[RMDB]
RNA sequence: GGGAACGACUCGAGUAGAGUCGAAAACUCUAGAGGCCGGGGUCGAGGGACGCUGGAGCCGUGAUGGGGAGGAGCUGCCGGUCAUCUGCCAGAGCAGCUCAGGCCACAUGCAUGCCCUGGUCCUUCCAGAUCAUCUCCGAUUCGUCGGAGAUGAUCUAAAAGAAACAACAACAACAAC
Reactivity to 2A3 in 0.01 (KOAc 150mM, MgCl2 10mM, bicine 150mM(pH8.5), 24C), signal-to-noise 1, nucleotides 027 to 126: c010u000c020u030a010g040a010g110g110c040c010g010g010g000g010u060c020g120a100g050g030g030a020c040g000c200u170g070g080a090g070c030c010g010u070g040a050u010g010g030g000g010a040g040g000a000g000c000u000g030c000c000g030g020u080c060a200u080c130u150g000c010c050a100g020a030g000c000a000g000c000u010c010a000g070g010c030c010a030c000a020u150g130c000a000u090g040c000c000c000u000g060g000u030c030c000u030u020c050c040
Reactivity to DMS in 0.01 (KOAc 150mM, MgCl2 10mM, bicine 150mM(pH8.5), 24C), signal-to-noise 2, nucleotides 027 to 126: c050u000c090u010a150g010a070g010g050c020c020g000g010g000g050u010c090g000a080g010g010g010a030c050g020c080u000g000g010a100g020c060c080g020u000g020a050u000g030g000g010g020a130g000g000a030g020c000u010g010c030c050g000g000u000c190a170u010c180u020g000c000c010a120g010a230g000c000a000g010c000u010c010a050g000g020c010c020a050c010a010u010g010c080a070u010g040c020c000c020u010g000g030u000c000c010u010u010c050c090